An RNA of 177 nucleotides, treated with DMS and 2A3 and read out base by base. DMS (dimethyl sulfate) methylates the pairing face of unpaired adenines and cytosines. It was measured as part of the RMDB library OK1LIB. The DMS profile rests on 14,132 reads. For 2A3 the reverse transcriptase was SuperScript II with manganese. The reactions ran in a buffer of 150 mM KOAc, 10 mM MgCl2 and 150 mM bicine (pH 8.5), at 24 C.
RNA sequence: GGGAACGACUCGAGUAGAGUCGAAAAGAAGGUCGAGUGCACGACCAGAGAGUGCGGUGAGAGACCGACAAAGAGUUCGAAUCGGAACGAACACCCGCAGACGAUCGACUGAAGAUCGAAGUGAGAAAUUACCGGGUAAUUUCGAUUACCCGGUAAUAAAAGAAACAACAACAACAAC
Reactivity to DMS in 0.01 (KOAc 150mM, MgCl2 10mM, bicine 150mM(pH8.5), 24C), signal-to-noise 7, nucleotides 027 to 126: g010a140a100g010g010u000c010g010a190g030u050g030c100a100c000g000a060c030c030a110g010a120g000a120g010u020g010c000g010g020u000g000a100g000a200g020a070c020c000g000a100c050a050a160a090g010a180g020u000u000c010g010a110a100u030c140g010g030a080a080c020g010a050a050c050a170c070c000c020g000c120a070g000a230c020g010a030u010c010g000a140c230u070g010a140a110g000a040u000c000g030a140a140g010u010g000a110g000a090a080
Reactivity to 2A3 in 0.01 (KOAc 150mM, MgCl2 10mM, bicine 150mM(pH8.5), 24C), signal-to-noise 4, nucleotides 027 to 126: g110a020a060g010g000u010c010g030a030g100u210g120c100a030c110g010a000c000c030a010g020a000g000a000g030u270g040c020g000g040u040g000a020g010a000g010a030c000c000g020a000c010a000a100a020g150a010g000u040u040c000g060a080a060u150c040g020g050a090a050c000g000a010a000c020a040c020c010c000g000c030a010g060a110c050g020a010u040c030g100a130c150u150g090a160a000g000a030u000c010g000a070a000g100u090g060a080g050a020a160